[RMDB]
RNA sequence: GGGAACGACUCGAGUAGAGUCGAAAAGUGCUUGAGCACUGUCGUUGCGACGAGAGUUCGAUGGAUGUCGAUCCGGAAAGACAUCCGAUCCGGAAAGCAUUUGCUCUCUUUGUGCUCUUGCACGAAAGGGACAGCGGUGCUUCGGCAUCGUUGUCCCAAAAGAAACAACAACAACAAC
Reactivity to 2A3 in 0.01 (KOAc 150mM, MgCl2 10mM, bicine 150mM(pH8.5), 24C), signal-to-noise 9, nucleotides 027 to 126: g000u000g000c000u000u000g000a000g000c000a010c020u030g020u020c070g160u180u300g190c150g020a020c020g010a010g000a000g010u080u220c140g060a140u190g090g000a010u020g090u230c020g010a040u010c010c000g000g030a050a030a000g050a040c050a170u020c030c010g000a020u000c000c000g000g000a030a020a000g010c010a010u020u030u130g000c000u000c000u000c000u060u090u080g000u000g000c000u000c000u000u010g000c000a000c010g000a030a010a000
Reactivity to DMS in 0.01 (KOAc 150mM, MgCl2 10mM, bicine 150mM(pH8.5), 24C), signal-to-noise 6, nucleotides 027 to 126: g000u000g000c000u000u010g000a020g030c010a010c010u010g000u000c020g020u030u030g020c040g010a010c030g020a040g010a020g000u010u030c210g020a130u040g010g010a000u010g000u010c000g000a300u010c000c000g030g000a000a070a300g000a130c210a090u030c130c000g000a210u000c010c020g000g000a030a100a240g000c030a010u010u010u010g010c020u010c000u000c010u010u020u030g010u000g010c010u010c020u000u000g010c000a000c000g000a040a110a100